[RMDB]
About this RNA
This 207-nucleotide RNA was probed chemically with 2A3 and DMS. High DMS reactivity at an A or C suggests that its Watson-Crick edge is free. 2A3 adducts were read by reverse transcription with SuperScript II with manganese. Reactivities are given for positions 27 through 156. The data come from the RNA Mapping Database (RMDB), library OK3TST. The reactions ran in a buffer of 150 mM KOAc, 10 mM MgCl2 and 150 mM bicine (pH 8.5), at 24 C. DMS adducts were read by reverse transcription with MarathonRT. For DMS, 6,465 sequencing reads were counted.
RNA sequence: GGGAACGACUCGAGUAGAGUCGAAAAUCGACAUGUUUACUCCUGAUAUUGAUUUAAUAGUGGUGGAUUAUGAAAGCACAUUACCCGCAUCCGUUUGACCCUAAAAAUAAAGCGGAAAUUAUUCGUCAAUGGGAACGCAUUUGCCGUACUAAAUGCCUAAAGGAAUUACGUUCGCGUAAUUCCUUUAAAAAGAAACAACAACAACAAC
Reactivity to 2A3 in 0.01 (KOAc 150mM, MgCl2 10mM, bicine 150mM(pH8.5), 24C), signal-to-noise 2, nucleotides 027 to 156: u120c000g020a020c010a070u090g000u080u050u080a090c020u030c010c010u030g050a100u100a110u170u060g050a060u040u120u170a170a090u100a050g040u040g020g030u010g010g060a080u010u070a070u210g080a100a120a000g050c020a000c010a070u000u080a000c010c010c020g000c060a060u020c020c000g030u070u110u080g060a100c010c000c070u040a020a000a030a040a130u080a020a070a000g040c000g000g000a000a050a050u170u090a090u040u050c010g020u020c030a040a020u070g040g000g020a030a020c030g010c020a020u040u000u180g040c050c000g000u010a010c010u060a010a050a050u070g000c010c000
Reactivity to DMS in 0.01 (KOAc 150mM, MgCl2 10mM, bicine 150mM(pH8.5), 24C), signal-to-noise 3, nucleotides 027 to 156: u000c030g040a080c030a020u000g030u000u000u010a070c050u000c020c020u000g010a140u000a140u000u000g010a150u010u000u000a050a070u020a070g010u000g030g050u010g010g010a050u000u000a080u010g010a060a140a180g000c080a060c050a050u000u000a090c040c010c010g000c090a280u000c020c010g000u000u000u000g020a100c070c020c010u030a010a110a120a060a070u000a030a040a090g010c010g010g000a060a090a070u000u000a080u000u020c150g020u010c030a060a050u000g010g010g000a060a080c070g000c050a110u000u010u010g000c040c050g000u000a180c080u010a020a060a090u010g010c040c080